[RMDB]
RNA sequence: GGGAACGACUCGAGUAGAGUCGAAAACCGGUGAUUCGAUGGAGCGCCGCAAGGCGAGCCGAUGAAUUGCCGAGAAGCCUGGCUCGAAAUCGUCGACGCAUCGACGACGGUCCUGCCAUGAGACCGUGCCUAUGAGCACAUUCGUGUGCUCAUAGGCAAAAGAAACAACAACAACAAC
Reactivity to DMS in 0.01 (KOAc 150mM, MgCl2 10mM, bicine 150mM(pH8.5), 24C), signal-to-noise 1, nucleotides 027 to 126: c000c000g060g010u000g000a000u000u010c020g030a160u000g010g000a010g000c010g010c000c000g000c300a130a160g030g010c030g000a030g070c010c000g050a110u060g010a010a010u000u010g030c000c000g000a000g010a130a170g000c000c030u000g000g060c010u000c060g000a030a260a060u000c000g040u050c000g020a010c300g030c230a030u030c040g000a070c000g000a000c090g020g010u000c000c070u020g030c000c100a020u080g000a040g000a050c010c020g000u020
Reactivity to 2A3 in 0.01 (KOAc 150mM, MgCl2 10mM, bicine 150mM(pH8.5), 24C), signal-to-noise 3, nucleotides 027 to 126: c010c000g000g010u000g000a010u000u000c030g030a080u180g040g010a060g000c000g000c010c000g050c070a050a030g000g000c000g010a000g000c020c000g010a050u090g000a010a010u000u010g010c010c000g030a060g020a050a020g010c000c030u040g010g000c060u030c090g060a060a090a100u020c000g000u000c010g040a060c080g070c120a180u170c010g000a010c000g000a000c000g050g010u040c010c020u040g090c030c020a140u100g020a030g000a100c010c000g020u020
The record gives the reactivity of an RNA of 177 nucleotides to DMS and 2A3. The reactions ran in a buffer of 150 mM KOAc, 10 mM MgCl2 and 150 mM bicine (pH 8.5), at 24 C. The 2A3 profile rests on 2,248 reads. Source: RMDB library RFM100, as collected in RNAgym. Values are in units of 0.01, from 0 to 300, in steps of 10. For 2A3 the reverse transcriptase was SuperScript II with manganese. For DMS, 1,346 sequencing reads were counted.